Chemical mapping of a 177-nucleotide RNA with 2A3. 2A3 adducts were read by reverse transcription with SuperScript II with manganese. It was measured as part of the RMDB library RFM100.
RNA sequence: GGGAACGACUCGAGUAGAGUCGAAAACAUUGUAAUAUGUAGAAUAUUUGAUUUUAGUCCCUCAAAAUGAGGACUAAAAUGAAUAUUAUAGGGACCAAUUUCAAUAUGAAAUGAUUUUACAAGGAUUGCUACGAUAGUAGUUCGCUACUAUCGUAGCAAAAGAAACAACAACAACAAC
Reactivity to 2A3 in 0.01 (KOAc 150mM, MgCl2 10mM, bicine 150mM(pH8.5), 24C), signal-to-noise 1, nucleotides 027 to 126: c000a020u000u030g030u010a040a060u080a150u300g020u130a000g060a110a000u020a010u010u000u030g100a010u000u010u000u000a000g020u100c060c180c000u000c010a060a300a010a040u240g000a020g000g000a000c000u000a000a040a000a000u000g000a000a020u000a010u000u160a040u020a070g070g000g090a000c000c010a020a000u040u020u030c010a050a000u090a120u150g060a020a000a090u070g030a020u000u010u000u110a020c000a020a010g030g000a040u010u060